[RMDB]
RNA sequence: GGGAACGACUCGAGUAGAGUCGAAAAGUACAAAAGCCGCGUAAUUGAGCCACGAAAUAGGUAAACAUUGUAAGAGGCUUUCACCGUUUGGUGCGUGGGAGCGAUCGUGGACGCGCGAUAAGCGAGUCACCAUAGUUCCGUUCGCGGAACUAUGGUGAAAAGAAACAACAACAACAAC
Reactivity to 2A3 in 0.01 (KOAc 150mM, MgCl2 10mM, bicine 150mM(pH8.5), 24C), signal-to-noise 6, nucleotides 027 to 126: g100u070a040c060a040a110a010a020g010c030c000g010c000g020u030a090a200u180u140g030a040g050c000c010a010c020g030a040a050a050u200a080g150g060u190a070a110a040c060a140u060u160g080u210a070a080g050a040g110g100c000u010u010u000c000a000c000c030g030u040u200u290g220g040u240g020c080g010u010g000g000g000a000g000c040g020a050u020c000g000u010g000g000a020c010g000c000g010c000g030a070u050a110a000g050c030g020a010g030u000
Reactivity to DMS in 0.01 (KOAc 150mM, MgCl2 10mM, bicine 150mM(pH8.5), 24C), signal-to-noise 3, nucleotides 027 to 126: g040u070a100c070a110a060a220a130g010c120c000g010c020g020u040a220a110u020u020g000a170g020c000c000a020c010g020a000a080a090u010a100g020g000u030a130a060a070c200a110u030u040g000u040a110a140g010a110g000g000c010u010u000u000c020a000c010c050g030u020u030u040g010g050u010g000c150g000u010g000g000g030a010g000c030g010a060u000c040g000u000g000g010a080c020g000c030g000c000g010a110u000a100a070g000c100g010a110g000u030